RNA sequence: GGGAACGACUCGAGUAGAGUCGAAAAAAUAGGGUGCAAAAACACAACUGCCAACGAAUACGCCUACGCUUUGGCAGCCUAAGCGUGCUGCCACGCACCUUUAGACCUUGCCUGUGGGUCUAAAGGUGUGUGACCUAACAGGCUUUGGGAGGCUUAAGUUCUUGUAUCAGUUCGCUGAUACAAGAACAAAAGAAACAACAACAACAAC
Reactivity to DMS in 0.01 (KOAc 150mM, MgCl2 10mM, bicine 150mM(pH8.5), 24C), signal-to-noise 1, nucleotides 027 to 156: a130a090u000a030g000g040g010u010g010c030a050a090a050a100a080c040a030c040a060a020c020u000g010c000c000a020a130c080g010a160a160u000a120c050g010c020c040u000a130c100g030c060u010u020u000g010g020c030a060g030c030c010u000a050a070g030c050g020u010g000c020u000g000c000c010a020c000g040c010a010c000c010u010u030u000a010g000a030c000c010u010u000g010c070c090u010g000u010g010g010g010u000c020u010a010a010a020g010g000u000g010u000g010u010g000a040c010c100u000a060a020c000a010g000g020c020u000u000u000g010g010g010a110g000g010c040u010u000a030a280
Reactivity to 2A3 in 0.01 (KOAc 150mM, MgCl2 10mM, bicine 150mM(pH8.5), 24C), signal-to-noise 3, nucleotides 027 to 156: a010a030u200a060g020g020g010u060g010c060a040a040a050a180a030c040a020c020a090a120c060u070g030c030c010a060a040c050g070a080a030u090a110c040g030c020c030u090a090c080g030c130u120u060u030g000g000c000a010g000c020c000u110a100a010g050c040g130u150g020c030u020g010c010c000a000c000g000c000a000c000c000u000u010u000a000g000a000c000c000u010u110g020c010c020u080g010u070g010g000g000u000c000u010a000a000a000g000g000u000g010u000g010u000g000a010c000c010u020a040a010c010a030g000g010c000u010u070u020g000g010g010a030g000g020c000u070u100a080a020
The data come from the RNA Mapping Database (RMDB), library ARCHII. Chemical mapping of a 207-nucleotide RNA with DMS and 2A3. The RNA was probed in 150 mM KOAc, 10 mM MgCl2 and 150 mM bicine (pH 8.5) at 24 C. 2A3 is a SHAPE reagent: it acylates the 2'-hydroxyl of flexible nucleotides of all four kinds. DMS adducts were read by reverse transcription with MarathonRT.